RNA sequence: GGGAACGACUCGAGUAGAGUCGAAAAGCGGAUGGCAACAGGCGCGCAAGGACCGGGUUGCGCAGCUGAUGGCCGAAUACCCCGGCGCGUGGAAUCCGAACCAGUACGGCAACCCCGACAACGUCGGCGAGUUAACCUAAUUCGUUAGGUUAACUCGAAAAGAAACAACAACAACAAC
Reactivity to 2A3 in 0.01 (KOAc 150mM, MgCl2 10mM, bicine 150mM(pH8.5), 24C), signal-to-noise 6, nucleotides 027 to 126: g050c030g020g040a060u090g050g020c030a110a030c020a110g060g000c010g000c000g010c030a020a030g060g030a060c030c030g030g030g020u020u030g010c020g000c050a040g000c020u060g020a210u080g060g000c020c020g020a040a040u140a100c000c000c010c010g020g000c040g000c030g010u050g010g050a050a020u030c020c010g010a030a060c030c010a040g060u110a040c030g010g000c020a030a080c010c000c010c010g010a020c030a240a030c090g040u030c010g030g010
Reactivity to DMS in 0.01 (KOAc 150mM, MgCl2 10mM, bicine 150mM(pH8.5), 24C), signal-to-noise 9, nucleotides 027 to 126: g020c050g000g010a080u000g010g000c030a060a100c070a190g010g010c030g010c020g010c030a050a050g010g000a150c070c050g010g000g010u000u000g000c060g020c020a080g040c010u010g000a140u000g010g010c010c000g020a100a080u000a150c070c030c020c050g000g010c040g010c050g010u000g010g010a090a080u000c020c020g010a090a100c050c040a090g010u000a070c070g000g010c070a080a100c070c040c000c010g000a050c050a070a090c090g010u000c070g010g010